[RMDB]
RNA sequence: GGGAACGACUCGAGUAGAGUCGAAAAGGGUGACCGAUGUGAUUGCCGGCCAGCGGCGCCAGCCUAAUCAGGUGCUGCGGCUCGCCGCCGCGGUCGAAUCGGGCUCCGAACACCCCAUCGGUGCGGCAUUGCAGAAACAGUUCGCUGUUUCUGCAAUAAAAGAAACAACAACAACAAC
Reactivity to DMS in 0.01 (KOAc 150mM, MgCl2 10mM, bicine 150mM(pH8.5), 24C), signal-to-noise 3, nucleotides 027 to 126: g020g020g000u010g000a100c030c010g020a030u000g020u020g010a070u000u010g020c170c030g030g000c010c070a060g050c020g020g020c020g000c060c090a100g000c060c060u000a080a090u020c230a100g010g020u000g010c070u010g010c070g010g000c010u010c280g010c070c140g000c040c030g030c020g000g030u000c010g010a090a030u000c030g010g000g000c000u000c000c020g010a110a080c090a130c070c030c000c050a090u010c050g010g000u000g020c040g010g000c180
Reactivity to 2A3 in 0.01 (KOAc 150mM, MgCl2 10mM, bicine 150mM(pH8.5), 24C), signal-to-noise 2, nucleotides 027 to 126: g080g020g040u040g010a020c000c000g010a020u030g100u070g100a100u040u120g080c090c020g020g000c050c060a060g010c000g120g010c030g040c040c060a020g040c020c010u160a190a180u250c130a030g000g090u120g030c080u050g000c070g110g020c030u030c010g030c000c050g030c040c030g000c010g010g000u010c010g000a010a030u010c020g010g020g000c010u040c000c010g030a080a010c030a080c040c010c000c010a030u030c030g080g040u070g000c000g000g040c050